RNA sequence: GGGAACGACUCGAGUAGAGUCGAAAAGAUUUACGAGAGUAAAUCGCAUUUGGAAACAAAUGUAAGGGGGAAUUACGACGCUAACUUCCUACAUUGGUAUCGAACCCAAUGUAGAUAAGUGCUAGUAGAUGGCAGACUACUAGACACAUGCGUUGAAAUGCUACUGAUCAUUCGUGAUCAGUAGCAUAAAAGAAACAACAACAACAAC
Reactivity to DMS in 0.01 (KOAc 150mM, MgCl2 10mM, bicine 150mM(pH8.5), 24C), signal-to-noise 4, nucleotides 027 to 156: g020a020u000u000u000a000c040g010a300g010a300g010u000a000a020a000u000c030g030c010a030u000u000u000g000g010a270a140a300c040a010a030a010u000g020u010a110a140g000g010g040g030g010a120a080u010u000a080c050g010a010c010g010c030u020a080a070c100u010u010c060c000u000a020c000a010u000u000g010g000u010a300u010c050g020a150a150c210c010c000a000a010u020g000u000a000g000a020u000a020a080g000u000g030c000u010a000g020u010a010g000a120u000g020g020c110a070g000a130c010u000a000c010u000a010g010a110c050a010c000a100u000g010c010g030u000u000g010a040a100
Reactivity to 2A3 in 0.01 (KOAc 150mM, MgCl2 10mM, bicine 150mM(pH8.5), 24C), signal-to-noise 7, nucleotides 027 to 156: g000a000u000u000u010a010c010g010a010g010a000g090u000a000a000a010u000c010g000c010a000u010u000u010g020g020a050a040a020c010a010a010a000u030g010u080a120a140g020g010g000g000g020a030a050u140u080a130c030g000a000c000g010c010u040a060a060c050u090u050c020c000u010a000c000a000u000u010g020g020u070a090u270c120g040a060a050c010c000c000a000a000u010g000u000a000g000a010u090a070a030g010u020g000c000u000a000g000u000a000g020a070u060g050g010c000a010g020a070c000u000a000c000u000a010g040a020c010a010c020a030u110g000c000g000u010u010g010a040a050